[RMDB]
RNA sequence: GGGAACGACUCGAGUAGAGUCGAAAAUCUAUGUACCCGCGCAGUAUUCAGAUAUUACAAGCGCUAGGUGACAAGACAUCUAAAUUGGAUGAGUUAAUCGAAAUGCGACUUGAAGCAAAGCACAACGGAGAUAAGACUUUGGCUAAUGCGUUGAAGCGAGUUUAUAUUCUUUCGAGAAUAUAAACUCAAAAGAAACAACAACAACAAC
Reactivity to DMS in 0.01 (KOAc 150mM, MgCl2 10mM, bicine 150mM(pH8.5), 24C), signal-to-noise 3, nucleotides 027 to 156: u000c030u020a110u000g000u000a120c010c010c020g010c080g030c010a300g010u000a090u010u020c050a240g020a210u010a060u010u000a060c030a060a070g020c030g010c020u000a060g010g010u020g020a150c030a020a100g010a090c050a020u000c020u000a040a170a120u010u020g030g060a110u000g010a100g010u010u000a090a120u000c050g010a070a070a110u000g020c030g010a080c040u000u000g040a120a130g000c050a060a050a110g030c070a040c050a040a070c080g000g010a130g020a080u000a130a130g000a060c030u000u000u000g010g040c010u000a040a090u000g000c020g000u000u000g020a080a130g010c170
Reactivity to 2A3 in 0.01 (KOAc 150mM, MgCl2 10mM, bicine 150mM(pH8.5), 24C), signal-to-noise 6, nucleotides 027 to 156: u020c010u030a180u080g020u030a050c010c000c020g010c020g000c020a010g040u080a080u110u230c030a060g140a160u110a070u200u160a090c080a170a090g000c010g000c030u040a050g040g000u030g040a020c010a040a030g070a020c010a040u010c020u180a150a270a230u220u170g030g000a030u030g020a030g080u050u130a100a050u080c060g010a040a040a110u090g030c030g040a090c120u020u100g020a030a020g010c030a040a020a020g020c020a040c020a140a050c080g090g040a090g020a070u090a060a030g020a030c020u030u030u040g030g000c000u050a080a060u090g030c030g040u040u050g010a030a000g110c070